[RMDB]
RNA sequence: GGGAACGACUCGAGUAGAGUCGAAAAUUGACCCUUUGUCCAAUUUUGAACAUAAGGUUAUUACAGAGUGCGUUACCAUAGUUUUAGGUGACGCAAUUCAAGUAGCCAAGUGCUAUGGGGAGUCUGUCGACCAUCGCCUUCGGGCGAUGGAAAAGAAACAACAACAACAAC
Reactivity to DMS in 0.01 (KOAc 150mM, MgCl2 10mM, bicine 150mM(pH8.5), 24C), signal-to-noise 3, nucleotides 027 to 129: u050u060g090a020c120c030c050u040u020u030g050u070c000c000a070a210u030u000u060u040g000a170a100c040a040u020a030a190g020g010u000u000a150u000u000a070c090a130g000a020g090u030g000c000g000u000u000a050c020c020a080u000a090g030u060u050u030u060a000g040g030u000g000a030c010g050c010a000a000u020u010c080a180a050g010u010a030g000c020c020a000a170g010u040g020c040u010a000u110g010g050g060g010a060g040u030c000u030g020u050c040g000a130
Reactivity to 2A3 in 0.01 (KOAc 150mM, MgCl2 10mM, bicine 150mM(pH8.5), 24C), signal-to-noise 3, nucleotides 027 to 129: u050u090g080a050c000c000c000u040u160u060g050u020c000c000a050a030u040u020u020u240g080a130a060c030a000u080a010a130g020g000u010u020a020u000u070a080c060a050g010a010g060u040g000c000g010u000u000a000c000c000a100u030a170g130u000u060u110u090a020g000g000u000g000a010c000g070c000a000a000u020u050c000a030a030g000u000a000g000c000c000a000a030g010u000g020c030u040a000u090g000g000g040g000a010g050u000c010u060g080u030c080g020a000